[RMDB]
Chemical mapping of a 207-nucleotide RNA with 2A3 and DMS.
RNA sequence: GGGAACGACUCGAGUAGAGUCGAAAAAGCUUCACCUAUCGAUGUAAGUAGUGCACAAGCUGUAAGAUGCACAAAUCUUCCACAUUAUUCCGGAUCAGCUCAUGAUUUGGUUUUUCAAAAGGAAAAUCCAGUUUUGAAUUAGAAUAAUGGCAUAAGAAGGAUGCUAAAUGUUCGCAUUUAGCAUCCUAAAAGAAACAACAACAACAAC
Reactivity to 2A3 in 0.01 (KOAc 150mM, MgCl2 10mM, bicine 150mM(pH8.5), 24C), signal-to-noise 3, nucleotides 027 to 156: a010g110c060u150u040c030a110c030c000u110a130u170c080g100a040u100g020u120a040a020g040u110a010g000u050g030c020a010c010a040a010g050c030u010g020u030a000a050g070a130u030g010c000a000c000a030a060a080u050c050u030u020c030c040a040c010a030u030u030a030u000u040c020c010g110g000a120u060c030a010g060c010u000c030a020u030g020a040u050u040u190g040g000u030u010u000u000u010c060a190a220a140a140g100g020a000a010a000a010u020c000c020a020g010u000u000u010u090g050a090a070u070u030a040g010a000a000u010a000a000u000g050g010c060a120u140a160a070g160a010
Reactivity to DMS in 0.01 (KOAc 150mM, MgCl2 10mM, bicine 150mM(pH8.5), 24C), signal-to-noise 1, nucleotides 027 to 156: a070g050c060u000u000c010a060c010c030u000a110u000c090g000a140u000g030u000a030a110g020u010a100g000u000g020c010a050c040a190a150g060c020u000g030u000a110a200g010a060u000g000c020a030c000a070a070a100u000c030u020u000c010c020a040c000a020u010u000a030u010u000c000c040g090g000a080u000c040a260g040c080u010c020a020u000g040a020u000u000u000g000g000u000u000u000u000u020c000a060a120a150a300g020g000a060a010a010a000u010c010c000a050g000u000u000u000u010g020a020a110u000u000a010g000a020a000u000a010a030u000g000g020c060a110u020a020a060g010a110
Annotation: The reactions ran in a buffer of 150 mM KOAc, 10 mM MgCl2 and 150 mM bicine (pH 8.5), at 24 C. For 2A3 the reverse transcriptase was SuperScript II with manganese.